Source: RMDB library M2PK50, as collected in RNAgym. The record gives the reactivity of an RNA of 177 nucleotides to 2A3 and DMS. DMS adducts were read by reverse transcription with MarathonRT. Conditions: 150 mM KOAc, 10 mM MgCl2 and 150 mM bicine (pH 8.5), 24 C.
RNA sequence: GGGAACGACUCGAGUAGAGUCGAAAAGUACCCAUCUUCGGAUGGGUACAAAUAAACUUGACAAGCGCCGUCAAGAAAAAGGCGGAAAAUAAGAACAAACAAAAACGCACAGGUUCGCCUGUGCGAAGUUAGAUGUACGGUUCGCCGUACAUCUAACAAAAGAAACAACAACAACAAC
Reactivity to 2A3 in 0.01 (KOAc 150mM, MgCl2 10mM, bicine 150mM(pH8.5), 24C), signal-to-noise 2, nucleotides 027 to 126: g000u000a010c000c000c000a000u000c010u020u030c140g130g020a000u010g000g020g010u000a000c000a000a000a000u010a000a020a030c040u080u100g070a050c040a110a090g050c080g030c030c030g010u030c010a020a030g130a150a100a010a000a000g010g010c020g050g000a070a040a030a030u190a050a040g030a110a020c050a110a060a020c020a000a090a110a020a040c010g000c000a010c010a000g010g090u050u050c200g080c050c000u010g000u000g000c000g010a010a010
Reactivity to DMS in 0.01 (KOAc 150mM, MgCl2 10mM, bicine 150mM(pH8.5), 24C), signal-to-noise 1, nucleotides 027 to 126: g000u000a010c000c000c000a010u000c000u000u010c220g020g040a000u010g000g000g000u010a010c020a000a060a030u010a070a110a140c040u000u000g000a090c180a030a160g030c230g000c040c040g000u000c000a030a020g030a010a080a060a100a030g000g040c020g000g000a080a050a010a070u000a050a060g030a060a090c100a110a050a090c070a020a040a050a140a130c030g000c000a000c000a000g000g000u010u000c220g020c000c000u000g010u000g000c010g040a000a010